[RMDB]
RNA sequence: GGGAACGACUCGAGUAGAGUCGAAAACUCUAUCAUGUAAUCGAAAUAAUACAAAUGACUACGUUGUUAUGAGUGCUUGGUAUAAGGAGCCCAAUUCCAUUAUUCUUUUAGCUGCUAAAAGCGACGUCUUGUAUUUUGAUAAUUAUACCAAGGAUAACGUCUGUUAAGUUUUCGAACUUAACAGACGAAAAGAAACAACAACAACAAC
Reactivity to 2A3 in 0.01 (KOAc 150mM, MgCl2 10mM, bicine 150mM(pH8.5), 24C), signal-to-noise 3, nucleotides 027 to 156: c000u010c010u040a090u100c040a060u120g060u160a100a060u070c060g020a160a080a110u220a070a050u150a090c090a070a190a120u180g010a050c060u040a030c120g010u010u020g030u090u060a050u110g080a050g050u070g050c000u000u000g020g000u020a020u000a020a050g030g010a010g000c060c010c000a010a060u090u010c000c020a030u070u100a110u100u120c000u070u080u060u110a090g020c090u150g030c020u110a060a110a070a000g010c010g020a070c040g030u020c010u050u050g020u030a060u030u120u020u020g030a020u030a190a020u090u000a010u030a020c000c010a030a000g030g000a010u000a050a000
Reactivity to DMS in 0.01 (KOAc 150mM, MgCl2 10mM, bicine 150mM(pH8.5), 24C), signal-to-noise 1, nucleotides 027 to 156: c030u020c030u000a060u030c020a120u020g020u000a070a090u010c020g020a150a170a130u000a070a100u010a140c000a110a110a070u000g010a040c030u020a100c090g000u000u030g000u000u000a080u020g020a200g050u010g020c050u000u000g020g000u000a030u000a030a050g000g030a080g000c000c010c010a050a170u000u000c010c010a190u000u000a080u000u000c040u010u000u020u010a160g010c000u000g010c020u000a130a100a200a110g000c050g030a040c110g010u000c010u000u000g020u000a040u000u000u000u010g010a130u010a070a060u000u000a020u010a030c030c000a020a040g010g020a100u000a040a190
Structure probing data (2A3 and DMS) for a 207-nucleotide construct.
For 2A3, 1,104 sequencing reads were counted.
The data come from the RNA Mapping Database (RMDB), library OK3TST.
For DMS, 2,483 sequencing reads were counted.